[RMDB]
RNA sequence: GGGAACGACUCGAGUAGAGUCGAAAACUGCACGAGAUAUGUAUAUGCCAAGAGCUAUUACUGCAGGAGAUGUAGUUACGCUUACUUCUUGUCAAGCAAAUUAUGUAAGUGUAAAUAAGACCGUCAUUACUACAUUCGUAGACAAUGAUGAUUUUGACGGAAGGAGAAAUUUCGAUUUCUCCUUCCGAAAAGAAACAACAACAACAAC
Reactivity to DMS in 0.01 (KOAc 150mM, MgCl2 10mM, bicine 150mM(pH8.5), 24C), signal-to-noise 2, nucleotides 027 to 156: c010u010g030c030a080c040g020a190g020a120u020a040u020g000u020a130u000a090u010g030c030c030a140a120g020a180g040c040u000a100u000u000a090c060u000g010c030a030g030g010a130g020a070u000g010u000a070g030u010u000a000c030g020c010u010u000a010c000u000u000c150u010u040g010u000c110a080a190g030c090a030a080a050u000u010a040u000g040u000a020a020g010u000g030u000a010a070a110u010a080a060g010a030c030c010g040u000c000a040u000u000a080c010u000a020c000a300u000u010c230g000u000a020g010a160c100a000a020u010g010a000u000g030a070u000u000u000u010g010a250
Reactivity to 2A3 in 0.01 (KOAc 150mM, MgCl2 10mM, bicine 150mM(pH8.5), 24C), signal-to-noise 5, nucleotides 027 to 156: c030u030g060c010a010c040g230a160g030a110u090a060u180g090u050a100u030a010u210g030c030c020a230a060g040a010g030c020u020a030u070u070a070c020u050g010c020a000g020g090a110g000a030u070g020u110a030g040u020u020a010c000g000c010u000u010a010c000u050u050c010u050u050g060u120c060a070a010g020c020a060a130a210u180u120a110u200g020u010a010a020g000u000g000u030a040a070a060u100a030a010g050a000c000c030g000u020c010a000u000u040a010c000u000a000c000a140u060u260c180g000u020a020g070a170c060a010a000u020g000a010u010g010a020u030u090u030u060g020a030

The data come from the RNA Mapping Database (RMDB), library OK3TST.
This 207-nucleotide RNA was probed chemically with DMS and 2A3.
Reactivities are given for positions 27 through 156.
For DMS, 3,466 sequencing reads were counted.
The RNA was probed in 150 mM KOAc, 10 mM MgCl2 and 150 mM bicine (pH 8.5) at 24 C.
For 2A3 the reverse transcriptase was SuperScript II with manganese.
High DMS reactivity at an A or C suggests that its Watson-Crick edge is free.
For 2A3, 2,404 sequencing reads were counted.